[RMDB]
This 177-nucleotide RNA was probed chemically with 2A3. Conditions: 150 mM KOAc, 10 mM MgCl2 and 150 mM bicine (pH 8.5), 24 C. Source: RMDB library OK1LIB, as collected in RNAgym. 2A3 adducts were read by reverse transcription with SuperScript II with manganese.
RNA sequence: GGGAACGACUCGAGUAGAGUCGAAAAGAUGUGCGCAUCGUCUACGACGUCUGGACGCCGGACACCGCGCCGCAAGCGGUGGUCGUGCUGGCCCAUGGUCUGGGCGAGCAUGCCCGCCGCUACGACCGCGAACCGAGUAAUUCGUUACUCGGUUCGCAAAAGAAACAACAACAACAAC
Reactivity to 2A3 in 0.01 (KOAc 150mM, MgCl2 10mM, bicine 150mM(pH8.5), 24C), signal-to-noise 1, nucleotides 027 to 126: g120a080u130g040u100g020c040g020c000a100u120c090g000u000c030u110a080c010g090a040c050g030u100c150u170g120g040a090c110g030c020c030g000g000a020c010a000c020c060g070c000g000c000c040g020c070a000a010g000c000g040g000u000g000g000u000c000g000u010g000c030u030g090g030c000c000c000a040u120g020g160u170c100u070g000g000g000c000g010a000g000c000a000u010g000c000c000c000g030c000c010g000c000u000a010c000g000a030c050c020